[RMDB]
RNA sequence: GGGAACGACUCGAGUAGAGUCGAAAAGAUAUGGAUGCCGUAGACAUGCACGUUCCAUCGGAAACGAUGGACGUGCAACAGCUACGGGCAUCCUAAGUCAAAACCGGUGUAGUUCGCUACACCGGAACAAUUAGCUCGGGUUCGCCCGAGCUAAUUGAAAAGAAACAACAACAACAAC
Reactivity to DMS in 0.01 (KOAc 150mM, MgCl2 10mM, bicine 150mM(pH8.5), 24C), signal-to-noise 2, nucleotides 027 to 126: g030a010u000a150u020g000g000a030u000g000c000c000g030u000a010g000a030c120a300u000g010c000a000c020g000u040u010c000c020a020u010c010g010g000a040a070a120c020g000a020u010g000g000a020c010g020u000g000c000a020a040c240a150g010c010u000a010c000g010g010g020c010a000u000c000c010u000a000a100g000u000c010a120a090a120a160c000c000g000g020u000g020u000a030g000u000u020c300g020c000u000a010c000a000c000c020g000g000a030a050
Reactivity to 2A3 in 0.01 (KOAc 150mM, MgCl2 10mM, bicine 150mM(pH8.5), 24C), signal-to-noise 1, nucleotides 027 to 126: g030a020u040a030u080g010g020a000u010g010c000c020g040u000a010g000a060c080a300u300g000c000a000c000g110u300u070c010c000a000u000c000g010g010a030a000a030c010g010a010u000g000g030a000c000g000u000g000c000a000a010c000a000g030c000u010a000c050g000g020g000c000a000u000c010c000u010a030a000g030u000c030a010a030a160a150c000c000g010g010u020g010u000a060g010u020u070c300g000c150u000a000c000a000c000c000g020g000a000a000